The record gives the reactivity of an RNA of 207 nucleotides to 2A3 and DMS. It was measured as part of the RMDB library M2RFPK.

RNA sequence: GGGAACGACUCGAGUAGAGUCGAAAACUCUUUAACUCGGCAUGAUACCACCGUUAUCGGGUCAACAGAGUAGUUGCAAAUGACAACAAUGCUCAGGGUUAUGCUCUCGCUGCCUAAUGGCGGUGCGCGGACGACUCAAUGUUCGCAUUGAGUCGAAUGUUAGUUCGAAGUUCGCUUCGAACUAACAAAAAGAAACAACAACAACAAC
Reactivity to 2A3 in 0.01 (KOAc 150mM, MgCl2 10mM, bicine 150mM(pH8.5), 24C), signal-to-noise 3, nucleotides 027 to 156: c020u030c010u020u080u070a130a110c080u040c020g020g000c050a040u140g020a050u100a090c000c020a010c010c010g150u070u050a030u110c010g010g000g030u070c030a040a050c010a030g040a000g010u040a020g030u010u070g050c060a120a230a300u150g080a140c000a040a010c020a040a100u150g030c020u020c060a020g080g030g000u070u090a060u230g030c000u000c000u000c050g040c040u050g000c000c000u220a260a130u190g000g010c020g000g040u010g010c090g000c020g010g070a040c000g010a010c000u000c000a000a000u000g010u060u070c220g010c140a000u000u000g000a000g000u000c000g040a040a000
Reactivity to DMS in 0.01 (KOAc 150mM, MgCl2 10mM, bicine 150mM(pH8.5), 24C), signal-to-noise 1, nucleotides 027 to 156: c030u000c020u000u010u020a030a000c020u010c010g010g020c060a200u000g040a180u000a070c020c000a130c010c010g060u010u000a050u000c090g000g010g000u000c020a110a080c050a070g000a050g010u010a080g010u010u010g010c040a100a110a210u020g010a110c030a000a050c020a030a040u000g010c010u000c040a110g010g040g000u000u000a090u010g030c010u000c000u000c040g000c020u000g000c010c000u010a040a130u000g040g010c000g000g010u000g010c070g000c080g030g010a160c020g010a020c010u010c000a030a000u010g000u000u010c260g010c000a010u000u020g020a020g040u010c000g000a020a070
For 2A3, 1,468 sequencing reads were counted. The RNA was probed in 150 mM KOAc, 10 mM MgCl2 and 150 mM bicine (pH 8.5) at 24 C.